[RMDB]
RNA sequence: GGGAACGACUCGAGUAGAGUCGAAAAGAUAUGGAAACGUGUCAGGGAGCGUGGGAUCGGAAACGAUCCUGAACGCGAAGAACUGACUGCGUUUCCUAAGUCAAAGCUCUGUCUUCGGACAGAGCAAGUUACACACUAGGUUCGCCUAGUGUGUAACAAAAGAAACAACAACAACAAC
Reactivity to 2A3 in 0.01 (KOAc 150mM, MgCl2 10mM, bicine 150mM(pH8.5), 24C), signal-to-noise 5, nucleotides 027 to 126: g010a010u040a010u110g010g000a010a000a000c010g010u020g000u030c010a010g050g100g110a300g020c010g000u030g000g010g010a010u000c000g000g000a020a040a000c010g000a000u000c010c000u020g100a040a010c010g000c030g030a090a070g040a070a040c010u010g010a000c010u050g000c010g010u000u010u000c000c000u000a050a010g020u010c060a170a110a020g000c000u000c000u010g010u000c010u030u110c300g090g000a000c000a000g000a010g000c000a000a000
Reactivity to DMS in 0.01 (KOAc 150mM, MgCl2 10mM, bicine 150mM(pH8.5), 24C), signal-to-noise 5, nucleotides 027 to 126: g010a010u010a300u010g000g000a000a010a010c000g050u000g010u000c000a000g010g010g010a120g010c010g050u000g000g010g000a010u000c010g010g010a060a060a120c000g010a000u000c000c000u000g020a080a020c010g010c010g000a100a140g000a120a210c010u010g000a010c000u020g030c010g010u000u000u000c000c000u000a010a080g010u010c020a100a130a180g010c000u000c000u000g000u000c000u000u030c260g020g000a010c000a010g000a010g000c000a000a020